RNA sequence: GGGAACGACUCGAGUAGAGUCGAAAAGAUUACGUGUCGUUGUGGAAUCGAUACUACGCACGAGAUUCCAAGGUCUCUGUAGUACGUCCGCUGGUGACGUCUAUGGAGUCACGUUCGAUAUACGAAAGGUAUCUACAUCCUUCGGGAUGUAGAUACCAAAAGAAACAACAACAACAAC
Reactivity to DMS in 0.01 (KOAc 150mM, MgCl2 10mM, bicine 150mM(pH8.5), 24C), signal-to-noise 2, nucleotides 027 to 126: g020a090u030u000a040c080g040u000g090u000c040g000u030u000g040u000g050g000a100a000u020c060g020a140u020a070c000u000a010c030g000c070a040c000g040a300g000a040u010u020c010c000a090a110g010g000u000c000u000c000u000g000u030a000g000u130a010c000g010u000c000c020g000c220u050g010g020u020g000a000c000g010u000c000u000a020u010g000g000a060g000u000c020a070c190g000u000u000c060g000a040u040a100u030a060c090g000a070a090a130
Reactivity to 2A3 in 0.01 (KOAc 150mM, MgCl2 10mM, bicine 150mM(pH8.5), 24C), signal-to-noise 2, nucleotides 027 to 126: g040a010u120u050a080c000g010u010g090u090c060g010u000u050g000u020g080g070a050a130u100c120g010a000u000a090c030u000a000c090g000c040a020c020g020a010g010a030u000u000c000c000a050a070g060g000u010c000u000c000u010g000u010a000g070u120a000c010g010u020c020c010g070c220u270g060g110u280g000a000c000g000u000c000u000a000u000g030g010a000g030u030c010a020c060g050u040u090c050g000a030u070a020u040a190c050g050a060a000a060

About this RNA:
Chemical mapping of a 177-nucleotide RNA with DMS and 2A3. As a SHAPE reagent, 2A3 marks flexible, mostly unpaired nucleotides at the ribose 2'-OH.